About this RNA: The record gives the reactivity of an RNA of 177 nucleotides to DMS. Conditions: 150 mM KOAc, 10 mM MgCl2 and 150 mM bicine (pH 8.5), 24 C. Reactivities are given for positions 27 through 126. For DMS, 3,966 sequencing reads were counted.
[RMDB]
RNA sequence: GGGAACGACUCGAGUAGAGUCGAAAAGAUAUGGACGACUCAGACAUGCUAGCGAAUACAGUUUAGCUGUUCGGAAACGAACAGCUAAACUGUAUUCGCAAUAGCAACAGCUGAAUCGUCCUAAGUCCUCUAAUUUAUAGUUCGCUAUAAAUUAGAGAAAAGAAACAACAACAACAAC
Reactivity to DMS in 0.01 (KOAc 150mM, MgCl2 10mM, bicine 150mM(pH8.5), 24C), signal-to-noise 3, nucleotides 027 to 126: g000a120u010a300u000g010g010a030c000g030a010c040u010c000a020g010a070c120a270u000g000c000u000a100g020c000g020a040a020u000a010c000a030g010u010u010u000a010g010c000u000g010u000u010c010g020g000a110a100a290c000g010a010a000c020a010g020c000u000a000a000a010c000u000g020u000a000u010u000c010g030c000a000a010u000a010g010c000a040a070c300a140g000c000u010g000a010a020u000c010g010u000c000c000u000a010a110g000u000c050